[RMDB]
Structure probing data (DMS and 2A3) for a 207-nucleotide construct.
The data come from the RNA Mapping Database (RMDB), library M2RFPK.
For DMS the reverse transcriptase was MarathonRT.

RNA sequence: GGGAACGACUCGAGUAGAGUCGAAAAGUUCGCAUGGUGCACUAUUGUGUUAUUAGUAACUAAGUAAGCUUACAAUCGAAAGUGUUUAACCAUAAAAGGGUAAAAUGGUGUAAGACAGUCUGAUACUUUACGGCUUCACGUUUCGACGUGAAGCCAACCAUAAGAUCAUGUUCGCAUGAUCUUAUGGAAAAGAAACAACAACAACAAC
Reactivity to DMS in 0.01 (KOAc 150mM, MgCl2 10mM, bicine 150mM(pH8.5), 24C), signal-to-noise 3, nucleotides 027 to 156: g050u000u000c050g020c070a160u000g000g020u000g000c030a060c030u000a070u000u000g020u000g020u000u000a070u000u000a080g010u010a080a090c060u000a050a160g010u010a060a110g010c020u000u000a070c060a080a140u000c050g010a090a080a080g000u000g010u000u000u000a070a060c010c020a060u000a040a090a130a120g010g000g030u000a030a080a070a080u000g000g010u000g010u000a040a060g000a060c060a050g000u000c020u000g000a120u000a060c050u000u000u000a100c090g030g050c000u000u000c010a010c010g010u000u000u000c260g010a070c020g000u000g000a010a020g010c000c020a010a020
Reactivity to 2A3 in 0.01 (KOAc 150mM, MgCl2 10mM, bicine 150mM(pH8.5), 24C), signal-to-noise 7, nucleotides 027 to 156: g070u080u100c050g000c100a030u060g010g000u030g020c010a000c030u070a130u120u160g060u020g040u130u030a040u050u030a050g090u040a050a040c050u020a110a030g120u040a100a020g080c020u040u070a020c040a070a080u090c050g090a120a030a030g010u020g030u040u080u080a010a010c000c000a000u090a060a170a010a010g060g010g010u070a050a070a030a060u100g010g010u040g020u040a030a020g050a030c020a020g030u020c030u040g020a040u040a220c020u040u050u080a080c110g010g000c000u000u000c000a000c010g000u010u050u120c220g080a030c000g000u000g000a000a010g000c000c000a000a000